[RMDB]
RNA sequence: GGGAACGACUCGAGUAGAGUCGAAAAGCCGCGUGCCUCCCAUCCUUGGUCGGUGGUAAAUGCAGGAGGUAAUUAACAGGAUCUUCACAAACUUGGAGCCGGCCCACUGAGUCGUUAAAAAAACACCGAUGAUAUAGUAGUUCGCUACUAUAUCAUCAAAAGAAACAACAACAACAAC
Reactivity to DMS in 0.01 (KOAc 150mM, MgCl2 10mM, bicine 150mM(pH8.5), 24C), signal-to-noise 3, nucleotides 027 to 126: g020c030c030g020c210g020u010g010c000c030u000c020c000c000a130u010c050c060u010u010g020g000u010c050g020g050u010g020g000u010a050a060a050u010g010c090a100g020g000a050g010g010u000a050a060u000u010a030a080c170a130g010g000a040u000c030u000u000c030a070c070a110a070a090c110u000u000g000g010a250g020c060c000g000g000c010c000c080a060c110u010g010a020g000u010c000g010u020u010a010a010a110a100a050a050a060c130a090c190c120
Reactivity to 2A3 in 0.01 (KOAc 150mM, MgCl2 10mM, bicine 150mM(pH8.5), 24C), signal-to-noise 4, nucleotides 027 to 126: g000c000c020g080c130g070u110g000c000c020u020c020c000c000a050u030c030c010u080u100g050g010u090c030g000g060u060g030g050u110a100a100a030u120g040c040a040g030g020a010g030g000u030a050a120u090u080a060a030c030a010g080g040a040u010c000u050u030c030a040c050a130a190a070c060u070u080g090g000a030g040c010c010g020g000c000c020c010a030c030u060g000a000g000u010c020g030u050u060a100a160a040a010a000a000a020c070a020c030c070

Conditions: 150 mM KOAc, 10 mM MgCl2 and 150 mM bicine (pH 8.5), 24 C.
An RNA of 177 nucleotides, treated with DMS and 2A3 and read out base by base.
It was measured as part of the RMDB library RFMREP.
For DMS, 2,342 sequencing reads were counted.
Reactivities are rounded to 0.1 and cut off at 0 and 3.